[RMDB]
RNA sequence: GGGAACGACUCGAGUAGAGUCGAAAAGACACUCAGUUCGCUGAGUGUCAAAUAAAAUCAGCGGUUAAAAACGAGGCGUUUUAACCGCUGAACGCCUCGUUAAAAGAACCAAGUUCGCUUGGUUCAAUCAGAUUGAACAGUUCGCUGUUCAAUCUGAAAAAGAAACAACAACAACAAC
Reactivity to 2A3 in 0.01 (KOAc 150mM, MgCl2 10mM, bicine 150mM(pH8.5), 24C), signal-to-noise 1, nucleotides 027 to 126: g010a000c000a000c010u000c000a030g020u060u060c100g050c150u000g000a000g000u000g000u000c000a000a000a000u000a000a010a000a070u010c000a000g010c000g010g050u060u070a070a140a020a000a000c090g100a140g220g090c190g060u010u000u010u020a000a010c010c000g000c000u000g000a000a000c040g030c000c000u050c030g060u060u210a010a080a050a070g000a000a000c000c000a000a010g020u010u090c190g020c110u000u000g000g000u010u000c000a000a030
Reactivity to DMS in 0.01 (KOAc 150mM, MgCl2 10mM, bicine 150mM(pH8.5), 24C), signal-to-noise 1, nucleotides 027 to 126: g030a030c000a000c000u000c000a000g000u000u010c220g020c010u000g000a030g010u000g010u010c000a000a060a040u000a060a080a090a050u000c000a000g010c000g030g000u000u010a030a100a030a010a010c000g010a110g050g020c120g000u000u010u000u000a000a050c020c000g050c020u000g020a000a030c080g000c000c000u000c170g000u000u000a100a060a130a070g000a000a000c000c000a020a000g000u000u010c270g010c000u000u000g000g000u000u000c000a070a060
Chemical mapping of a 177-nucleotide RNA with 2A3 and DMS. Values cover nucleotides 27 to 126. The RNA was probed in 150 mM KOAc, 10 mM MgCl2 and 150 mM bicine (pH 8.5) at 24 C.